The record gives the reactivity of an RNA of 177 nucleotides to DMS. Source: RMDB library TTRINS, as collected in RNAgym. The reactions ran in a buffer of 150 mM KOAc, 10 mM MgCl2 and 150 mM bicine (pH 8.5), at 24 C. Values cover nucleotides 27 to 126.

[RMDB]
RNA sequence: GGGAACGACUCGAGUAGAGUCGAAAAGAUAUGGACCCUGAACUACGUACGCAAUCCAAACGAGCGGUGAAGAAUUUCGGAAACGAAAUUCGAGCUCUAUGGAUUGCGUACGCAGGGUCCUAAGUCACUUAAUGUUCCUCUUCGGAGGAACAUUAAGAAAAGAAACAACAACAACAAC
Reactivity to DMS in 0.01 (KOAc 150mM, MgCl2 10mM, bicine 150mM(pH8.5), 24C), signal-to-noise 3, nucleotides 027 to 126: g020a030u020a300u010g010g000a010c000c000c010u010g030a120a090c160u020a300c010g020u000a040c000g000c000a010a010u000c000c010a010a050a300c300g000a000g000c010g030g010u000g020a170a260g000a010a000u000u000u000c000g010g020a200a110a230c010g000a000a000a010u010u000c000g000a090g020c020u000c000u000a300u000g000g000a000u000u000g010c000g010u000a010c000g000c010a000g010g010g010u000c000c000u000a010a040g000u010c030a220